[RMDB]
RNA sequence: GGGAACGACUCGAGUAGAGUCGAAAAGAUGUGUGAUGACAAAAUGUUUCGGUCCCAAAUGACAUUCCAUGAUUUGACUGUUGCAUUUUUCCUGACAUCAAAAGGCAAGCUGCUUCGGCAGCUUGCCGCUUUGGGUUAGGUUCGCCUAACCCAAAGCAAAAGAAACAACAACAACAAC
Reactivity to 2A3 in 0.01 (KOAc 150mM, MgCl2 10mM, bicine 150mM(pH8.5), 24C), signal-to-noise 2, nucleotides 027 to 126: g020a020u000g060u030g040u050g070a130u140g000a030c080a080a040a010a020u020g020u010u020u000c030g030g030u030c080c100c030a020a060a050u040g040a040c030a130u140u230c130c020a050u180g030a120u090u030u120g000a000c000u030g000u040u020g010c000a010u000u000u020u020u030c010c020u080g100a020c000a000u030c000a000a080a050a080g000g010c000a000a000g000c010u010g010c020u030u060c130g050g020c000a010g000c030u010u010g000c010c000
Reactivity to DMS in 0.01 (KOAc 150mM, MgCl2 10mM, bicine 150mM(pH8.5), 24C), signal-to-noise 2, nucleotides 027 to 126: g020a040u020g010u010g020u000g010a080u030g020a090c190a050a010a010a040u010g000u000u000u000c020g000g000u000c060c260c130a040a090a060u010g010a060c160a090u020u000c130c130a060u000g000a090u000u000u000g010a040c020u000g010u000u000g000c020a030u000u020u000u000u000c000c010u010g000a030c030a020u000c040a040a020a080a100g010g000c010a020a010g010c000u000g000c000u000u010c150g020g000c000a000g020c000u000u010g000c000c000
An RNA of 177 nucleotides, treated with 2A3 and DMS and read out base by base. The data come from the RNA Mapping Database (RMDB), library RFMREP. As a SHAPE reagent, 2A3 marks flexible, mostly unpaired nucleotides at the ribose 2'-OH. Conditions: 150 mM KOAc, 10 mM MgCl2 and 150 mM bicine (pH 8.5), 24 C. 2A3 adducts were read by reverse transcription with SuperScript II with manganese. High DMS reactivity at an A or C suggests that its Watson-Crick edge is free.